[RMDB]
RNA sequence: GGGAACGACUCGAGUAGAGUCGAAAAGACAAUCAGUUCGCUGAUUGUCAAAAGAGCAGCUAUGAGCUCAAGUGUCAUAGCAAAAGAUCGAAAGAUCAAUAAAAAGCAGAUACUUCGGUAUCUGCAAUCAUUUAUGAGAGUUCGCUCUCAUAAAUGAAAAAGAAACAACAACAACAAC
Reactivity to DMS in 0.01 (KOAc 150mM, MgCl2 10mM, bicine 150mM(pH8.5), 24C), signal-to-noise 4, nucleotides 027 to 126: g010a010c010a000a010u000c000a010g030u010u000c220g030c010u000g000a010u000u000g000u010c000a040a070a100a180g000a000g020c020a250g010c010u000a000u000g000a020g000c000u000c030a080a150g010u000g010u000c010a000u000a000g010c000a160a070a090a130g010a010u000c000g030a150a100a170g010a010u000c000a110a130u010a050a090a060a140a110g000c000a000g000a000u000a010c000u000u010c150g050g000u000a000u000c000u000g010c000a010a000
Reactivity to 2A3 in 0.01 (KOAc 150mM, MgCl2 10mM, bicine 150mM(pH8.5), 24C), signal-to-noise 3, nucleotides 027 to 126: g000a000c000a000a000u000c010a000g030u030u090c130g030c090u000g000a000u000u010g000u000c010a000a010a010a020g010a000g000c010a000g010c000u010a010u010g000a000g000c010u060c140a100a060g210u190g000u120c000a000u000a000g000c000a000a030a010a080g010a010u020c010g050a050a040a020g000a000u020c030a020a010u150a040a070a010a030a000g000c000a000g010a010u000a000c000u040u110c210g080g000u000a000u000c000u000g000c000a000a000

Notes
This 177-nucleotide RNA was probed chemically with DMS and 2A3. It was measured as part of the RMDB library M2PK50.